Structure probing data (DMS) for a 177-nucleotide construct. For DMS the reverse transcriptase was MarathonRT. The data come from the RNA Mapping Database (RMDB), library RFMREP. Values are in units of 0.01, from 0 to 300, in steps of 10. The RNA was probed in 150 mM KOAc, 10 mM MgCl2 and 150 mM bicine (pH 8.5) at 24 C.
RNA sequence: GGGAACGACUCGAGUAGAGUCGAAAAGUGAGUCGGGACCUAAGGCGAGGCCGACAGGCGUAGUCGAUGGACAACGGGUUGAUAUUCCCGUACCCGUGUGAACGCGCCCCUGGUGAAUCAGUGAUGCGACUGUUAACGACUUCGGUCGUUAACAGUCAAAAGAAACAACAACAACAAC
Reactivity to DMS in 0.01 (KOAc 150mM, MgCl2 10mM, bicine 150mM(pH8.5), 24C), signal-to-noise 1, nucleotides 027 to 126: g020u030g000a160g000u000c000g040g000g020a280c020c010u000a130a150g010g030c000g010a130g060g000c000c030g010a090c260a020g050g020c080g010u000a200g000u000c030g020a080u000g000g000a060c140a110a140c000g000g020g000u000u020g000a120u010a200u000u000c000c000c000g010u030a040c040c000c000g030u020g000u000g020a110a100c080g030c020g010c030c030c100c020u010g020g070u000g010a120a090u020c020a030g010u010g000a130u000g000c180